An RNA of 177 nucleotides, treated with DMS and 2A3 and read out base by base. For 2A3, 1,568 sequencing reads were counted. Conditions: 150 mM KOAc, 10 mM MgCl2 and 150 mM bicine (pH 8.5), 24 C. Source: RMDB library OK2TRN, as collected in RNAgym. As a SHAPE reagent, 2A3 marks flexible, mostly unpaired nucleotides at the ribose 2'-OH.
RNA sequence: GGGAACGACUCGAGUAGAGUCGAAAAGCAUCGCAAUAGGAUCCAUACACAACGCGCGAGCGAUUGCCACACGCUGCUGCUGACCGCCGGAAAGCUGCGCCGGAAACUUAUUGGCGUGAGCAGAAAGAUUACAAGGGUUGUUCGCAACCCUUGUAAUAAAAGAAACAACAACAACAAC
Reactivity to DMS in 0.01 (KOAc 150mM, MgCl2 10mM, bicine 150mM(pH8.5), 24C), signal-to-noise 4, nucleotides 027 to 126: g010c050a050u000c070g010c040a060a080u010a070g010g010a090u000c030c050a070u000a140c100a100c090a110a080c110g010c080g040c130g000a090g010c020g010a060u010u020g000c040c040a060c100a070c120g010c010u000g000c030u000g010c020u010g000a130c110c060g010c040c030g010g010a030a050a070g010c010u000g000c030g010c010c030g040g000a070a030a130c170u010u010a110u010u000g010g010c020g030u000g010a050g030c020a070g010a070a070a100g000
Reactivity to 2A3 in 0.01 (KOAc 150mM, MgCl2 10mM, bicine 150mM(pH8.5), 24C), signal-to-noise 2, nucleotides 027 to 126: g030c000a050u070c000g010c060a020a130u070a120g050g060a030u010c010c010a040u100a100c080a000c020a060a100c080g030c010g030c000g060a020g010c030g040a120u040u190g040c000c000a040c010a000c070g070c060u090g000c000u020g010c020u020g010a090c000c050g010c020c000g090g010a130a030a000g000c070u060g020c000g000c020c010g070g000a060a090a080c060u180u160a140u180u190g000g010c000g030u060g140a010g000c010a000g070a010a090a000g130